Structure probing data (DMS and 2A3) for a 207-nucleotide construct. High 2A3 reactivity points to a flexible backbone, as in loops and unpaired stretches. It was measured as part of the RMDB library OK3TST. For DMS the reverse transcriptase was MarathonRT.
RNA sequence: GGGAACGACUCGAGUAGAGUCGAAAAUCACAAUCGUGUGCUGAGGGCUUACUUUGUGCUUUUCAGAUGACAUUUCAUUUGAUGCUCUCAAUAACCCUGAAGGGAUUUCAGAGAUGGGGAUUAUGAUGGAGCUUCAGAAUUAAACUGAUUAAAACUACGUAUGAUAAAUGUUCGCAUUUAUCAUACGAAAAGAAACAACAACAACAAC
Reactivity to DMS in 0.01 (KOAc 150mM, MgCl2 10mM, bicine 150mM(pH8.5), 24C), signal-to-noise 3, nucleotides 027 to 156: u000c040a070c060a090a090u010c060g070u000g030u000g020c050u020g020a110g020g020g020c050u010u010a060c060u000u000u000g020u000g020c020u000u000u010u010c010a080g010a100u000g030a120c100a090u010u000u010c070a110u000u010u000g010a050u000g000c010u000c040u010c060a080a070u000a040a070c010c010c000u000g030a150a160g020g020g000a130u010u000u010c110a170g010a160g010a100u010g010g010g030g000a110u010u010a030u000g010a180u000g000g000a110g000c010u000u000c010a060g010a060a060u000u000a070a140a160c040u010g000a120u000u000a020a030a070a090c020u000a110
Reactivity to 2A3 in 0.01 (KOAc 150mM, MgCl2 10mM, bicine 150mM(pH8.5), 24C), signal-to-noise 8, nucleotides 027 to 156: u090c020a020c040a060a100u140c110g030u050g010u030g080c010u030g030a090g030g060g020c020u080u090a080c030u140u170u120g060u070g030c010u060u090u100u040c020a040g030a130u080g030a030c020a070u110u200u100c030a050u060u050u070g010a010u030g010c000u000c000u000c010a020a030u020a020a020c000c010c000u010g080a080a100g110g030g070a140u070u200u200c130a070g020a020g040a160u170g020g010g000g030a040u020u050a020u080g120a060u090g040g010a010g000c000u010u020c020a000g020a020a010u090u110a110a050a040c030u050g040a070u120u160a060a120a050a060c050u160a050